Structure probing data (DMS and 2A3) for a 177-nucleotide construct. The reactions ran in a buffer of 150 mM KOAc, 10 mM MgCl2 and 150 mM bicine (pH 8.5), at 24 C. The data come from the RNA Mapping Database (RMDB), libraries RFM100 and RFMREP.

RNA sequence: GGGAACGACUCGAGUAGAGUCGAAAAUCCGGCCAGAGGACCGUGUCAGCCGGUCAGUUUUACUGGGGCGGUAUCCUCCCAAAGAGUAACGGAGGAGCGCGAAGGUGGGCUCAGCCCGGUUGGCAACUAGGUACCAACAUUUCGAUGUUGGUACCUAAAAAGAAACAACAACAACAAC
Reactivity to DMS in 0.01 (KOAc 150mM, MgCl2 10mM, bicine 150mM(pH8.5), 24C), signal-to-noise 2, nucleotides 027 to 126: u000c020c000g020g020c000c030a100g000a130g010g000a040c010c050g000u000g020u010c020a010g020c020c000g000g010u020c070a040g010u000u000u000u020a040c000u000g010g000g010g010c010g020g030u010a080u020c000c010u040c000c000c150a090a090a210g040a150g000u000a180a210c300g020g000a020g010g000a050g000c040g000c010g000a300a090g040g000u030g000g030g010c010u000c150a170g000c090c010c020g020g020u010u000g000g030c050a020a040c140
Reactivity to 2A3 in 0.01 (KOAc 150mM, MgCl2 10mM, bicine 150mM(pH8.5), 24C), signal-to-noise 3, nucleotides 027 to 126: u030c000c000g010g070c040c020a080g060a140g070g050a060c010c040g040u040g000u030c010a010g000c000c010g000g020u000c000a000g000u000u000u030u130a010c020u010g070g010g140g070c020g110g010u120a240u060c000c000u030c010c000c000a110a250a030g150a040g020u100a060a030c030g010g010a020g000g000a020g060c010g000c000g000a020a010g050g010u030g020g000g000c030u040c100a020g000c010c000c000g000g000u000u000g000g000c000a020a000c020